Conditions: 150 mM KOAc, 10 mM MgCl2 and 150 mM bicine (pH 8.5), 24 C. An RNA of 177 nucleotides, treated with DMS and 2A3 and read out base by base. For DMS the reverse transcriptase was MarathonRT. Values cover nucleotides 27 to 126. For 2A3, 808 sequencing reads were counted.
RNA sequence: GGGAACGACUCGAGUAGAGUCGAAAAGUGCAGAUUGAAAUUCAUGGGAGCCUCUCCAUAAUGGAUGAACGCCGCGUUAGUGCGCGCAGUCGCGACGUAAACGCUCUGUGUUCCCGUUCAGGCCUCAACCAUGAGGACCUUUCGAGGUCCUCAUGGUAAAAGAAACAACAACAACAAC
Reactivity to DMS in 0.01 (KOAc 150mM, MgCl2 10mM, bicine 150mM(pH8.5), 24C), signal-to-noise 2, nucleotides 027 to 126: g010u000g000c030a010g010a120u010u000g010a100a150a020u010u000c050a030u010g030g000g000a060g010c120c080u000c070u030c010c030a130u010a070a090u000g020g000a030u010g000a100a060c060g000c040c080g000c000g020u000u000a080g040u000g010c090g020c050g020c080a070g000u030c060g020c000g020a030c030g000u000a050a080a130c070g010c070u000c050u000g030u010g000u000u000c010c010c000g010u020u000c130a110g030g000c030c070u010c110a100
Reactivity to 2A3 in 0.01 (KOAc 150mM, MgCl2 10mM, bicine 150mM(pH8.5), 24C), signal-to-noise 1, nucleotides 027 to 126: g110u090g000c020a020g060a130u080u120g020a160a140a030u040u040c030a060u050g040g000g000a020g090c030c030u150c010u050c050c000a030u190a190a040u050g020g000a000u000g020a060a000c040g010c040c030g000c030g010u050u110a130g050u110g240c040g000c010g030c030a020g180u190c090g000c000g040a100c060g070u040a030a120a000c000g000c020u000c030u060g020u000g010u040u020c000c000c010g040u110u070c040a060g000g110c040c000u050c030a000